An RNA of 207 nucleotides, treated with DMS and 2A3 and read out base by base.
2A3 adducts were read by reverse transcription with SuperScript II with manganese.
The data come from the RNA Mapping Database (RMDB), library OK3TST.
The RNA was probed in 150 mM KOAc, 10 mM MgCl2 and 150 mM bicine (pH 8.5) at 24 C.
For 2A3, 768 sequencing reads were counted.
RNA sequence: GGGAACGACUCGAGUAGAGUCGAAAAUUAUUCAAACCUCUGGGCAAAUGUAUUAGUCACUUGACCCUCCACGAACUCCUCCAAGGACUUCAGGGAUUAACGCUGUUGCCACCUGGCUCCUCAGAGCGGCCAGUCACCGUGGUGCUUCAGAAUCAGACUGGAAAAUUAUAUUCGUAUAAUUUUCCAGAAAAGAAACAACAACAACAAC
Reactivity to DMS in 0.01 (KOAc 150mM, MgCl2 10mM, bicine 150mM(pH8.5), 24C), signal-to-noise 1, nucleotides 027 to 156: u000u010a120u000u010c010a090a110a190c020c010u020c000u010g010g070g040c040a040a040a090u010g010u000a130u010u000a150g010u010c020a060c000u000u000g000a110c060c010c020u020c020c000a080c080g010a100a070c010u000c030c010u010c040c080a090a120g000g000a070c070u000u000c040a050g010g020g010a200u000u000a060a100c050g050c010u000g010u040u000g000c020c020a060c140c000u000g000g030c060u000c010c050u000c070a100g000a210g050c050g000g010c010c000a190g000u020c040a040c040c050g010u000g030g010u000g020c020u000u000c040a100g020a110a170u010c030a120g010a290
Reactivity to 2A3 in 0.01 (KOAc 150mM, MgCl2 10mM, bicine 150mM(pH8.5), 24C), signal-to-noise 2, nucleotides 027 to 156: u060u010a070u060u040c070a090a120a050c000c000u060c090u140g020g000g040c050a080a060a090u040g020u080a160u130u030a060g050u100c050a060c130u110u130g010a180c020c010c010u000c000c000a020c030g050a050a000c030u000c030c000u020c110c030a100a020g020g000a010c020u030u030c050a030g000g020g090a010u060u060a060a070c050g000c030u040g020u110u060g000c010c000a000c000c020u000g000g010c010u030c000c010u080c010a040g010a000g050c060g010g000c030c000a010g050u030c010a010c060c020g010u000g000g000u020g000c020u050u050c010a010g050a030a030u220c140a040g150a180